[RMDB]
RNA sequence: GGGAACGACUCGAGUAGAGUCGAAAAAAGUGAUUAUUCGUAAUCACUUCACGCCGGGCGCGGAGGCGCGUGCCUGUAGUCCCAGCUACUCGGGAGGCUAAACGACGUACCCGUUCGCGGGUACGAAACUGGUCUAACAGUUCGCUGUUAGACCAGUAAAAGAAACAACAACAACAAC
Reactivity to 2A3 in 0.01 (KOAc 150mM, MgCl2 10mM, bicine 150mM(pH8.5), 24C), signal-to-noise 2, nucleotides 027 to 126: a010a010g010u020g010a010u000u060a010u050u110c170g050u090a040a000u000c000a010c000u010u060c080a080c110g060c030c000g010g010g000c020g000c000g070g050a110g070g090c080g000c020g070u060g110c000c010u030g020u050a040g040u030c010c010c020a000g030c030u140a120c020u040c030g000g010g010a010g000g020c040u040a110a070a040c070g120a000c010g030u000a010c010c020c010g000u020u040c140g010c000g020g000g030u020a000c000g010a020a000
Reactivity to DMS in 0.01 (KOAc 150mM, MgCl2 10mM, bicine 150mM(pH8.5), 24C), signal-to-noise 2, nucleotides 027 to 126: a030a040g000u000g000a020u000u000a040u000u020c170g000u000a020a000u010c000a000c000u000u000c130a130c070g010c060c040g020g000g020c030g030c020g010g000a130g010g020c070g010c070g030u000g000c030c010u000g010u010a070g010u010c020c000c000a150g000c050u000a040c040u000c040g000g000g000a070g010g000c080u000a050a050a110c150g010a210c010g030u000a010c000c000c000g000u000u020c160g020c000g000g000g000u000a000c010g000a000a040